RNA sequence: GGGAACGACUCGAGUAGAGUCGAAAAUUCAACAACUCGUUGACAGUGUUGAAAACAUUUUGGAAGGAGAUUCAAUCCACCUCGAAUGUCGUGUCACUCCAAUCAACGACCCACGUCUUCAUGUGGACUUAACAUGAGACUUCGGUCUCAUGUUAAGAAAAGAAACAACAACAACAAC
Reactivity to DMS in 0.01 (KOAc 150mM, MgCl2 10mM, bicine 150mM(pH8.5), 24C), signal-to-noise 5, nucleotides 027 to 126: u010u000c030a050a050c050a050a080c130u000c030g020u000u000g010a060c190a080g000u000g010u000u000g010a060a080a140a050c040a050u000u010u000u000g020g010a080a120g020g010a160g010a040u010u010c250a110a120u010c010c020a050c080c020u000c090g000a030a040u010g020u000c070g020u010g000u000c050a070c030u000c050c060a060a120u010c030a030a040c060g000a100c210c010c010a040c100g000u010c140u010u000c100a090u010g020u000g010g010a230
Reactivity to 2A3 in 0.01 (KOAc 150mM, MgCl2 10mM, bicine 150mM(pH8.5), 24C), signal-to-noise 5, nucleotides 027 to 126: u020u000c000a020a000c000a040a070c030u010c020g050u010u070g030a050c040a070g010u020g010u080u100g050a020a040a020a020c000a020u060u050u050u120g240g040a200a150g060g020a050g020a050u210u180c060a050a110u010c000c020a030c020c010u010c020g000a020a020u030g010u050c050g010u040g040u130c030a010c050u040c040c020a010a080u020c010a000a020c020g040a060c010c000c000a010c020g070u040c100u210u100c090a100u180g020u030g080g000a040